[RMDB]
RNA sequence: GGGAACGACUCGAGUAGAGUCGAAAAAGGCUGUGUAGACAGUUCAGUAAAGACAGGACCUGGAUGUGACAGCUGAGCAAACAGCUAGAGCUUUGGCAGCUCAGCAGGAGGCUUUGCCAGGCAUGGACGCCUGCCUCCCUCCUGUGGAGGUCAGGAAUGAGGUUUUAAUGUUCGCAUUAAAACCUCAAAAAGAAACAACAACAACAAC
Reactivity to 2A3 in 0.01 (KOAc 150mM, MgCl2 10mM, bicine 150mM(pH8.5), 24C), signal-to-noise 1, nucleotides 027 to 156: a000g000g000c020u010g010u060g020u100a050g050a180c060a000g000u010u240c030a030g080u180a040a130a000g060a100c010a030g000g050a080c000c010u030g040g000a030u070g070u040g050a040c040a040g000c000u000g000a000g000c010a070a040a250c040a010g000c010u100a090g030a090g180c130u190u090u020g040g000c000a000g030c030u000c000a020g000c010a000g050g070a030g090g000c020u070u040u040g050c000c000a000g000g000c010a000u060g060g070a040c230g060c000c000u020g000c000c000u050c010c000c000u130c050c070u180g040u130g000g000a020g000g000u020c000a000g000g030a010a070
Reactivity to DMS in 0.01 (KOAc 150mM, MgCl2 10mM, bicine 150mM(pH8.5), 24C), signal-to-noise 1, nucleotides 027 to 156: a090g030g030c000u000g060u010g020u000a110g020a120c030a060g000u010u040c010a130g010u000a070a140a100g000a070c030a210g030g010a140c050c050u000g000g000a150u000g010u010g010a120c000a060g000c000u000g000a060g020c040a050a080a090c180a120g030c020u010a030g010a090g020c090u010u020u010g020g040c130a220g040c000u000c000a090g000c010a070g020g010a160g020g010c030u000u000u000g000c000c040a090g020g050c030a090u000g040g000a090c110g030c000c010u010g000c050c000u000c000c000c000u000c060c070u000g010u010g000g000a020g000g030u010c030a030g000g000a120a120

The record gives the reactivity of an RNA of 207 nucleotides to 2A3 and DMS. For DMS the reverse transcriptase was MarathonRT. For 2A3, 616 sequencing reads were counted. 2A3 is a SHAPE reagent: it acylates the 2'-hydroxyl of flexible nucleotides of all four kinds. Reactivities are given for positions 27 through 156.